[RMDB]
RNA sequence: GGGAACGACUCGAGUAGAGUCGAAAAAUUUCUGUUUCUCGUGUAGGGUCUGCUGCACAGCCUAAAGCAAUGAAACAAGUUGCAGGUAAAUUAAAACUUGAAUUAGCUCAAUUUGCUGAAUUAGAAGAUCAGAGUCAGAAUUCGUUCUGACUCUGAUAAAAGAAACAACAACAACAAC
Reactivity to DMS in 0.01 (KOAc 150mM, MgCl2 10mM, bicine 150mM(pH8.5), 24C), signal-to-noise 3, nucleotides 027 to 126: a110u010u000u010c060u020g020u000u010u000c010u000c080g010u010g020u000a140g010g010g010u010c020u000g020c030u000g020c060a240c050a070g010c080c030u000a070a130a200g000c010a040a030u010g010a090a100a150c050a050a110g010u000u000g010c110a080g010g000u010a030a030a110u000u010a060a090a060a070c040u000u000g000a030a130u010u010a070g000c080u010c300a050a050u000u000u000g010c000u010g000a090a110u000u000a100g030a100a130g010
Reactivity to 2A3 in 0.01 (KOAc 150mM, MgCl2 10mM, bicine 150mM(pH8.5), 24C), signal-to-noise 1, nucleotides 027 to 126: a000u040u080u020c030u080g030u030u040u000c030u000c020g000u040g000u030a060g030g020g120u020c110u110g000c000u030g000c010a000c000a050g020c030c020u110a090a100a030g000c020a010a060u020g040a140a070a100c010a030a020g010u040u060g040c050a020g080g050u090a130a030a060u080u160a130a170a040a020c020u000u030g020a040a060u070u010a090g000c020u040c100a040a100u050u100u100g000c000u020g030a140a110u100u050a190g060a140a030g030
Structure probing data (DMS and 2A3) for a 177-nucleotide construct. The DMS profile rests on 1,529 reads. For 2A3, 746 sequencing reads were counted. For DMS the reverse transcriptase was MarathonRT. The RNA was probed in 150 mM KOAc, 10 mM MgCl2 and 150 mM bicine (pH 8.5) at 24 C.